The data come from the RNA Mapping Database (RMDB), library OK1LIB.
The record gives the reactivity of an RNA of 177 nucleotides to 2A3 and DMS.
DMS adducts were read by reverse transcription with MarathonRT.
For DMS, 1,708 sequencing reads were counted.
The RNA was probed in 150 mM KOAc, 10 mM MgCl2 and 150 mM bicine (pH 8.5) at 24 C.
For 2A3 the reverse transcriptase was SuperScript II with manganese.
RNA sequence: GGGAACGACUCGAGUAGAGUCGAAAAGGGCAAGUCAGCCGUCGAGUUCGUCGAGUUCGUCGAGCAGUCGGUCGGCCGCUGCCGUCGAGGACUCGGGACCACGAGCGGUGAGCAGGUCGCCGUCGACCCCAUGGGGACUCUUCGGAGUCCCCAUGGGAAAAGAAACAACAACAACAAC
Reactivity to 2A3 in 0.01 (KOAc 150mM, MgCl2 10mM, bicine 150mM(pH8.5), 24C), signal-to-noise 3, nucleotides 027 to 126: g080g020g020c040a060a040g140u220c110a020g000c010c010g020u020c010g020a030g030u020u010c050g110u020c010g130a000g020u080u090c000g060u020c040g070a020g030c060a040g060u300c100g080g020u110c050g060g100c050c010g020c000u000g000c000c010g020u020c000g000a030g010g040a020c040u050c080g010g010g010a040c010c010a070c060g010a080g090c000g040g030u070g070a030g010c040a040g030g070u080c070g040c060c000g020u050c010g120a070c000
Reactivity to DMS in 0.01 (KOAc 150mM, MgCl2 10mM, bicine 150mM(pH8.5), 24C), signal-to-noise 1, nucleotides 027 to 126: g000g000g000c060a080a050g000u000c020a240g000c000c050g060u000c030g000a190g000u020u010c020g010u000c020g040a150g000u000u000c020g000u000c000g000a220g000c010a040g000u040c000g000g000u080c110g000g000c010c060g000c030u020g000c010c020g000u040c000g000a260g010g020a050c020u000c020g000g000g000a050c000c040a050c000g040a110g020c020g030g000u000g000a070g000c060a090g030g010u040c010g000c000c040g030u000c050g030a160c140